[RMDB]
RNA sequence: GGGAACGACUCGAGUAGAGUCGAAAAGCACAAUGUUUGAAAAAGGACAGAGGACAGCCCAUGACAGGGAAAUAUAUGAAAUGGAAAUGGAAGGGAAAUUUGGGCUAUACUACAUAGAGCAGGUUUCCAAUAGAGGCCGUUUCGACGGCCUCUAUUGAAAAGAAACAACAACAACAAC
Reactivity to DMS in 0.01 (KOAc 150mM, MgCl2 10mM, bicine 150mM(pH8.5), 24C), signal-to-noise 2, nucleotides 027 to 126: g000c100a130c070a060a080u050g000u010u040u000g000a050a030a070a080a060g000g000a020c030a020g010a070g010g000a130c040a050g010c030c020c030a050u010g050a150c120a070g030g000g020a080a050a030u000a080u010a130u030g000a120a060a040u010g010g030a010a090a050u010g000g010a110a060g000g010g000a020a020a050u000u030u000g000g000g000c060u000a050u000a090c130u020a050c120a060u010a040g000a040g000c030a000g030g000u010u010u000c000